[RMDB]
RNA sequence: GGGAACGACUCGAGUAGAGUCGAAAAACUAUUUUAUUGUCACUUUCUCUCUCAGUUUGUGUGUGUGACAGUGAACCGCCGCCUUAGAAUCAUUAAACCCACACAAUAAUAUACAAACAACAACAACCAUAUUCCCUGUCUUCGGACAGGGAAUAUGAAAAGAAACAACAACAACAAC
Reactivity to DMS in 0.01 (KOAc 150mM, MgCl2 10mM, bicine 150mM(pH8.5), 24C), signal-to-noise 2, nucleotides 027 to 126: a140c030u010a030u000u050u000u000a080u000u030g000u000c040a000c050u000u000u000c010u000c010u010c020u020c070a130g070u030u000u000g010u000g000u010g050u010g020u000g030a060c030a090g000u010g020a100a100c050c070g000c020c000g020c040c020u000u020a020g000a080a030u010c050a200u010u000a040a130a100c020c010c000a070c090a030c150a030a030u000a030a110u040a020u010a140c130a060a050a090c160a050a030c040a080a060c300a050a040c150
Reactivity to 2A3 in 0.01 (KOAc 150mM, MgCl2 10mM, bicine 150mM(pH8.5), 24C), signal-to-noise 4, nucleotides 027 to 126: a000c070u100a160u110u090u070u060a090u080u130g040u030c010a030c030u010u070u020c020u010c000u000c010u000c040a110g030u030u120u060g040u060g010u020g010u000g020u030g030a020c030a020g030u020g050a050a050c050c000g020c010c010g040c030c000u070u090a090g110a110a060u090c000a030u050u160a110a090a070c000c030c020a020c040a010c050a030a040u210a200a040u140a030u070a060c090a050a180a010c030a050a010c010a030a020c010a000a010c110